[RMDB]
RNA sequence: GGGAACGACUCGAGUAGAGUCGAAAAGAUGCGCCGUCGGCAUUUCCCCAGCAGCCAUGACCUACCAGGCUGCGGUGCGGCUCGCCGCACAGGUCAUCCCUCAUCGGGCGCGUCCUGCGUCCUUCCAAAAACUGACUAACCUUCGGGUUAGUCAGAACAGAUGAGUAGGGUUCGCCCUACUCAUCUGAAAAGAAACAACAACAACAAC
Reactivity to 2A3 in 0.01 (KOAc 150mM, MgCl2 10mM, bicine 150mM(pH8.5), 24C), signal-to-noise 1, nucleotides 027 to 156: g050a020u020g010c070g040c070c090g120u120c080g080g010c030a040u000u050u050c000c000c000c000a040g010c000a000g000c000c020a160u140g010a050c010c030u120a200c030c090a030g000g020c000u000g000c020g010g000u000g010c070g000g000c120u120c180g170c020c000g060c020a010c000a020g030g020u000c010a060u100c030c020c010u110c040a200u150c060g020g030g000c010g000c010g050u210c070c080u140g000c000g020u020c020c000u080u020c040c000a020a080a100a070a040c000u000g000a000c000u000a010a010c000c000u000u090c170g040g010g000u000u000a000g020u000c000a000g000a000a000